RNA sequence: GGGAACGACUCGAGUAGAGUCGAAAAACGGUGAUGUUACCCGUAAUGGCAAGACAUUAACUCUGACCGAUGCGCAGCGCCAGCAGGCUUUCCGCUAUCAGACGGCCUUGCGCAAAGAUUUACCGUGUGGCCUACGAUUGUUCGCAAUCGUAGGCCAAAAAGAAACAACAACAACAAC
Reactivity to DMS in 0.01 (KOAc 150mM, MgCl2 10mM, bicine 150mM(pH8.5), 24C), signal-to-noise 2, nucleotides 027 to 126: a030c080g010g030u000g030a060u010g000u010u000a190c280c030c020g010u010a170a100u030g000g030c130a060a020g000a120c080a060u000u000a010a140c130u000c100u000g010a080c020c020g000a300u000g000c000g000c030a070g010c300g000c000c000a080g000c060a090g000g000c010u000u020u000c240c230g000c060u000a060u000c150a170g020a080c110g010g000c010c010u010u000g010c010g010c080a020a060a100g010a040u010u000u020a130c010c000g030u000g000